[RMDB]
RNA sequence: GGGAACGACUCGAGUAGAGUCGAAAACGGAGACUGUUCGCAGUCUCCGAAAGGAGCGCGCUUUUCCGCUAAGGCCAUACGGACAGCCGGCUCCAAAGCCGAAAAUCCGGCGGUUCGCCGCCGGAAACGAGUAGUAUUGCUUCGGCAAUACUACUCGAAAAGAAACAACAACAACAAC
Reactivity to DMS in 0.01 (KOAc 150mM, MgCl2 10mM, bicine 150mM(pH8.5), 24C), signal-to-noise 1, nucleotides 027 to 126: c000g020g000a050g020a030c000u020g010u010u020c240g050c000a030g000u000c000u000c000c000g030a000a080a300g000g010a010g030c010g000c250g020c120u000u000u000u000c040c040g000c100u010a060a080g010g020c020c030a030u000a090c020g000g010a050c300a060g010c020c000g000g000c090u000c020c000a130a050a090g010c030c030g000a210a130a100a150u030c000c000g000g030c010g010g000u000u000c170g000c020c000g000c000c010g010g000a010a010a010
Reactivity to 2A3 in 0.01 (KOAc 150mM, MgCl2 10mM, bicine 150mM(pH8.5), 24C), signal-to-noise 1, nucleotides 027 to 126: c020g000g000a010g010a000c000u020g030u080u080c150g000c130a000g010u070c000u010c000c000g020a120a000a000g000g020a010g010c050g000c000g040c080u110u090u090u040c030c010g020c140u120a090a080g090g010c040c000a030u030a120c020g000g000a000c000a000g010c000c000g090g000c000u000c000c000a040a010a020g070c010c020g110a060a020a000a010u000c000c010g020g000c030g030g050u060u020c260g000c070c050g020c030c020g010g030a040a000a000